[RMDB]
RNA sequence: GGGAACGACUCGAGUAGAGUCGAAAAAAGGAGUCUUGCCGUGGGGUUGCUGAUUGGAAAGACUUUGGCGUCCAUUGUUCAUGGAGGGUGGAAGGUCUACAACGCGCUGUCAAAGGGGAGAGAGCUGUGAAAGGAACUCAUUCGUGAGUUCCUUUCAAAAAGAAACAACAACAACAAC
Reactivity to DMS in 0.01 (KOAc 150mM, MgCl2 10mM, bicine 150mM(pH8.5), 24C), signal-to-noise 2, nucleotides 027 to 126: a070a080g000g000a050g030u000c030u000u000g020c050c040g000u000g000g000g010g020u010u000g030c040u020g010a090u000u010g020g000a100a100a080g020a060c040u000u010u000g030g000c070g000u020c020c010a040u000u010g000u020u010c140a070u000g000g000a050g010g000g000u020g000g010a070a080g010g010u010c040u020a090c120a040a070c120g000c130g020c060u000g020u010c060a040a080a140g000g010g010g010a100g000a080g000a060g000c130u000g000
The record gives the reactivity of an RNA of 177 nucleotides to DMS.
The data come from the RNA Mapping Database (RMDB), library OK2TST.